The record gives the reactivity of an RNA of 177 nucleotides to 2A3 and DMS. The 2A3 profile rests on 795 reads.
RNA sequence: GGGAACGACUCGAGUAGAGUCGAAAACUAGGGCGCCGGCUCGCCGGCCUAGGCGAGACGCUGGGCGGCAUACAGAGCAAGCUCGAGAACAUACCCGACUGGAGAGACGUGCAGCGGGUAGAGGACGCUGUUGACCCAUAUUCGUAUGGGUCAACAGAAAAGAAACAACAACAACAAC
Reactivity to 2A3 in 0.01 (KOAc 150mM, MgCl2 10mM, bicine 150mM(pH8.5), 24C), signal-to-noise 1, nucleotides 027 to 126: c040u040a080g090g020g090c020g020c090c120g170g050c000u000c000g000c030c050g270g100c050c060u080a040g070g100c020g020a120g030a040c090g050c050u030g020g000g000c000g030g000c010a040u150a120c080a110g090a010g060c000a090a020g020c000u010c060g080a070g020a060a030c020a010u050a030c000c000c000g130a170c100u010g000g090a090g010a050g040a110c060g110u170g020c050a000g010c030g000g000g000u010a010g000a050g010g000a000c040g020
Reactivity to DMS in 0.01 (KOAc 150mM, MgCl2 10mM, bicine 150mM(pH8.5), 24C), signal-to-noise 1, nucleotides 027 to 126: c030u010a130g000g000g010c060g000c180c170g040g020c010u000c040g020c040c000g000g090c110c060u010a070g030g000c030g000a100g010a100c090g060c050u010g010g000g030c010g000g020c010a110u010a060c200a160g000a100g000c090a070a220g010c000u010c020g000a130g000a100a110c140a150u000a020c000c000c010g000a110c020u020g020g030a110g000a210g040a100c150g040u010g010c030a020g000c020g000g010g010u000a010g000a070g000g000a120c130g000